Conditions: 150 mM KOAc, 10 mM MgCl2 and 150 mM bicine (pH 8.5), 24 C.
The record gives the reactivity of an RNA of 177 nucleotides to 2A3 and DMS.
For DMS, 916 sequencing reads were counted.
The data come from the RNA Mapping Database (RMDB), library TTRDES.
RNA sequence: GGGAACGACUCGAGUAGAGUCGAAAAGAUAUGGACCCAGGAUGGAGUCGUCAUCGGAAACGAUGAUACGACUAUGAAGUCCGGGUCCUAAGUCAAAGCACUAACGAAGUUCGCUUCGUUAGUGCAAGGACGACAUACAGUUCGCUGUAUGUCGUCCAAAAGAAACAACAACAACAAC
Reactivity to 2A3 in 0.01 (KOAc 150mM, MgCl2 10mM, bicine 150mM(pH8.5), 24C), signal-to-noise 1, nucleotides 027 to 126: g030a010u010a000u010g010g000a000c040c040c100a150g000g000a030u050g000g030a000g000u010c020g010u020c030a020u010c010g000g010a000a000a000c000g000a010u010g000a030u100a130c000g000a010c000u150a300u150g030a010a010g010u000c000c000g000g010g000u000c000c000u000a010a000g000u010c010a000a160a050g000c000a000c020u030a020a000c010g020a000a000g030u060u170c240g110c200u000u000c000g000u000u000a000g020u020g000c010a010a020
Reactivity to DMS in 0.01 (KOAc 150mM, MgCl2 10mM, bicine 150mM(pH8.5), 24C), signal-to-noise 1, nucleotides 027 to 126: g000a020u010a020u050g000g000a010c000c000c010a210g030g010a010u000g000g000a000g030u000c000g000u010c010a000u000c000g070g000a000a010a070c000g010a000u000g000a070u000a180c150g010a030c000u010a280u010g050a230a300g000u000c010c010g010g010g000u000c000c000u000a000a000g000u000c000a170a050a170g000c000a000c010u010a010a030c000g010a010a000g020u010u000c300g020c050u010u010c000g000u000u010a000g030u000g010c000a030a010